[RMDB]
RNA sequence: GGGAACGACUCGAGUAGAGUCGAAAAGAAAGAAAGUUUUCGAUACGCCUCUGAUCUUCAGGAUCCCUGUCUGAACACAGAAAUUGAGUGUUCGCAAGGUUUCCUCAAGAUCAGGGCUUCGAGUCAAUCUCACUAUCCCUUUCGAGGGAUAGUGAGAAAAAGAAACAACAACAACAAC
Reactivity to DMS in 0.01 (KOAc 150mM, MgCl2 10mM, bicine 150mM(pH8.5), 24C), signal-to-noise 2, nucleotides 027 to 126: g000a150a110a170g030a150a130a110g010u000u000u010u000c010g000a010u000a300c080g000c050c000u000c010u010g010a010u000c020u000u010c300a020g000g000a010u000c030c000c000u010g000u020c090u010g020a000a010c000a000c000a130g020a060a100a220u010u020g030a060g020u000g000u000u000c010g000c080a030a000g000g010u030u000u000c000c000u000c160a000a010g000a010u010c000a000g000g030g000c020u000u000c000g000a020g000u020c020a110a260
Reactivity to 2A3 in 0.01 (KOAc 150mM, MgCl2 10mM, bicine 150mM(pH8.5), 24C), signal-to-noise 7, nucleotides 027 to 126: g110a040a110a020g170a070a100a110g040u010u000u010u010c000g000a010u010a090c080g020c000c010u250c010u040g000a010u000c000u010u010c010a000g000g000a010u010c000c010c000u020g000u020c120u210g000a000a010c010a000c010a020g260a210a260a100u290u300g090a120g060u000g000u000u000c000g000c010a010a060g010g000u020u170u010c000c000u010c000a000a000g000a000u000c010a000g000g000g000c000u010u010c000g000a000g010u000c010a010a050